Overview:
An RNA of 207 nucleotides, treated with 2A3 and DMS and read out base by base. Reactivities are given for positions 27 through 156. For DMS the reverse transcriptase was MarathonRT. For 2A3 the reverse transcriptase was SuperScript II with manganese. For 2A3, 2,407 sequencing reads were counted.

[RMDB]
RNA sequence: GGGAACGACUCGAGUAGAGUCGAAAAAAGGUAGGAGCAGCUCAGUUUCUAGAUCGAGGGAAAUAAUAGUCUUGCUGAGCUCUGUGCUUGCCAGACCAGAUCUGUCUUGUAUCUGUGCCCACUUCCGAGGUGCCUGUCAUACUUUGAUGCCAGUGGACAGCAGCAAAAUAUUCGUAUUUUGCUGCUGAAAAGAAACAACAACAACAAC
Reactivity to 2A3 in 0.01 (KOAc 150mM, MgCl2 10mM, bicine 150mM(pH8.5), 24C), signal-to-noise 4, nucleotides 027 to 156: a000a010g030g000u030a010g030g060a040g000c010a030g090c020u010c010a020g010u020u150u060c060u050a040g010a140u120c120g090a120g060g090g060a060a080a030u200a100a070u100a100g050u000c040u050u060g000c000u000g000a000g000c020u000c030u020g030u020g030c010u010u010g020c000c010a010g010a020c000c030a020g020a080u010c030u060g160u040c050u100u060g000u080a040u000c020u010g050u080g030c000c010c010a080c050u110u050c040c030g050a090g020g020u060g040c040c030u020g000u040c010a010u040a220c050u090u070u140g030a010u060g030c040c000a040g060u070g050g040a020
Reactivity to DMS in 0.01 (KOAc 150mM, MgCl2 10mM, bicine 150mM(pH8.5), 24C), signal-to-noise 2, nucleotides 027 to 156: a130a110g020g030u000a030g020g000a070g000c020a070g030c030u000c000a060g020u000u000u020c050u000a040g020a040u000c040g020a100g020g000g000a110a110a100u000a100a070u000a060g000u000c030u000u000g000c010u000g020a050g010c020u000c110u020g040u030g010c000u000u000g010c010c000a160g010a080c010c010a090g020a100u000c020u010g010u010c070u010u000g020u000a050u010c050u010g020u000g030c030c000c030a090c070u000u010c040c020g020a080g000g030u010g010c020c030u000g000u000c020a110u000a050c070u000u000u000g010a120u000g020c010c020a090g010u010g010g020a250